[RMDB]
Structure probing data (2A3) for a 207-nucleotide construct. Source: RMDB library M2RFPK, as collected in RNAgym. For 2A3, 681 sequencing reads were counted. The reactions ran in a buffer of 150 mM KOAc, 10 mM MgCl2 and 150 mM bicine (pH 8.5), at 24 C. Reactivities are given for positions 27 through 156.

RNA sequence: GGGAACGACUCGAGUAGAGUCGAAAAGAUCGGAAACAGCAGCAGGUGAGUCCGCCUUAUGUGAAGGAUCGGCUGAAACACGAGGAAAUACUGAGCCAACGCAAGACGGUAGCCGCACAGUAGCAACAAAACGCUUACGUGUUCGCACGUAAGCGAAUCAGGCUAAGGAGUUCGCUCCUUAGCCUGAAAAAGAAACAACAACAACAAC
Reactivity to 2A3 in 0.01 (KOAc 150mM, MgCl2 10mM, bicine 150mM(pH8.5), 24C), signal-to-noise 1, nucleotides 027 to 156: g040a030u100c020g000g000a160a000a000c050a030g000c000a000g000c010a020g050g000u040g050a020g020u060c060c010g000c000c020u100u100a180u160g090u030g130a060a010g030g000a030u130c080g050g000c060u060g060a090a000a000c090a000c080g030a040g000g140a050a240a000u150a040c120u080g010a020g010c020c010a050a000c010g030c040a020a020g030a020c020g000g020u010a020g090c050c020g010c000a040c000a020g010u180a000g060c000a030a030c000a050a030a070a020c010g020c000u010u000a000c000g000u000g030u070u070c190g020c030a000c000g010u000a010a010g000c000g000a000a000